RNA sequence: GGGAACGACUCGAGUAGAGUCGAAAAGAGCAUCACAGGCACUUCAUGCAUAUCGUACUGGAUAGAUACUUAUCCAAGCACAAGGCGUGGCCUCCUUUCUCGAAGAAUCAGCAUCCUAAAGAAGGAACUCGAUUGAGACAUCUUUACGAUCAUGAUGUCUGACGAGAAAUUUCGAUUUCUCGUCAGAAAAAGAAACAACAACAACAAC
Reactivity to DMS in 0.01 (KOAc 150mM, MgCl2 10mM, bicine 150mM(pH8.5), 24C), signal-to-noise 1, nucleotides 027 to 156: g050a070g040c020a060u000c060a100c180a060g000g050c020a060c060u000u010c040a080u020g000c060a150u000a110u000c060g000u020a010c020u020g000g020a060u000a020g010a300u020a080c140u000u000a040u010c000c000a050a140g050c040a010c010a140a000g040g010c050g090u000g010g000c060c010u000c020c020u000u000u000c010u000c050g000a110a080g030a030a100u010c050a190g000c060a300u000c030c010u060a060a030a000g010a160a060g010g020a050a150c020u000c050g040a110u000u000g000a080g000a170c010a050u010c000u000u000u000a140c050g020a080u000c060a260u020g010a070u010g010
Reactivity to 2A3 in 0.01 (KOAc 150mM, MgCl2 10mM, bicine 150mM(pH8.5), 24C), signal-to-noise 3, nucleotides 027 to 156: g020a020g000c030a040u110c030a030c040a080g040g070c070a060c160u070u040c080a080u090g010c020a060u070a070u160c100g060u110a050c050u010g020g010a000u000a020g100a080u150a160c060u030u000a050u000c000c000a020a050g020c010a050c030a100a010g060g000c000g030u010g000g030c030c000u020c010c000u050u090u010c010u000c030g140a160a070g000a120a050u010c010a010g000c040a000u030c000c020u060a040a070a070g040a030a040g060g020a090a050c020u030c040g220a280u080u270g020a030g000a030c020a000u000c010u000u070u050a030c040g030a090u050c020a070u090g040a020u030g030